[RMDB]
RNA sequence: GGGAACGACUCGAGUAGAGUCGAAAAUAGACAUGAUAAGAUGUGAGGAGCUGAUUAAGACAGGGUAUAAGGUCUAUCCAUUCAAGAUAAUGUGCCCUCAGUAUUUCCAAUCCGCGGAGAUGUCAGAACCAUGCCUACGGUUCGCCGUAGGCAUGGUAAAAGAAACAACAACAACAAC
Reactivity to DMS in 0.01 (KOAc 150mM, MgCl2 10mM, bicine 150mM(pH8.5), 24C), signal-to-noise 2, nucleotides 027 to 126: u020a030g000a020c090a020u000g010a170u090a030a110g030a100u000g000u010g000a260g000g000a120g000c000u000g000a070u060u010a080a250g000a100c260a060g000g000g040u000a020u040a060a080g030g030u000c050u010a080u080c000c020a080u000u100c060a120a190g040a100u070a100a190u040g000u000g000c000c000c000u000c040a080g000u030a000u000u010u000c070c000a030a130u000c070c120g000c080g020g000a080g000a030u000g000u000c040a190g020a160
Reactivity to 2A3 in 0.01 (KOAc 150mM, MgCl2 10mM, bicine 150mM(pH8.5), 24C), signal-to-noise 2, nucleotides 027 to 126: u210a010g010a000c010a090u010g090a050u120a220a060g090a140u090g070u060g220a070g080g030a010g000c030u020g030a150u050u260a020a040g000a090c140a090g020g000g010u050a030u040a060a020g120g030u000c000u040a090u120c000c090a050u140u240c080a110a020g000a050u170a070a140u090g030u030g060c000c000c020u000c020a000g020u030a150u000u160u070c000c000a000a120u020c020c010g010c000g020g040a060g000a090u000g010u020c000a010g010a010